[RMDB]
RNA sequence: GGGAACGACUCGAGUAGAGUCGAAAAGCUUACUUGAUUCUUGCAUAUAUACUGCUACCAAGCAUAACGAUUUCUCUCCCGAUGAUUUAGAAUUCGUAGUUGCUGUCAGAUCAUGGAGUGAAUGUGAAUCAUCCCAGGAUUUCGAUCCUGGGAUGAUAAAAGAAACAACAACAACAAC
Reactivity to DMS in 0.01 (KOAc 150mM, MgCl2 10mM, bicine 150mM(pH8.5), 24C), signal-to-noise 3, nucleotides 027 to 126: g010c070u000u000a050c050u000u000g010a030u000u010c070u010u010g000c040a060u000a110u000a140u000a070c150u000g000c030u000a090c160c110a070a070g020c020a040u020a070a070c010g000a050u000u000u000c010u010c200u000c010c030c140g030a110u010g010a100u000u000u010a060g020a040a070u000u000c020g010u000a070g010u000u000g020c060u010g010u010c140a070g010a060u000c050a040u000g000g000a050g010u000g020a070a070u010g010u000g010a120
Reactivity to 2A3 in 0.01 (KOAc 150mM, MgCl2 10mM, bicine 150mM(pH8.5), 24C), signal-to-noise 1, nucleotides 027 to 126: g000c000u070u090a130c000u130u210g010a050u080u070c030u070u040g030c020a000u110a010u020a000u030a150c040u050g020c010u050a130c000c050a030a020g020c020a030u040a130a000c020g020a010u000u030u000c050u000c000u010c000c020c060g130a100u080g020a020u030u050u230a030g000a040a020u050u040c030g000u010a070g070u070u050g000c010u010g080u080c030a020g020a030u020c020a040u030g020g050a000g000u030g100a130a090u140g020u000g170a030

This 177-nucleotide RNA was probed chemically with DMS and 2A3. Source: RMDB library OK2TST, as collected in RNAgym. For 2A3 the reverse transcriptase was SuperScript II with manganese. The RNA was probed in 150 mM KOAc, 10 mM MgCl2 and 150 mM bicine (pH 8.5) at 24 C.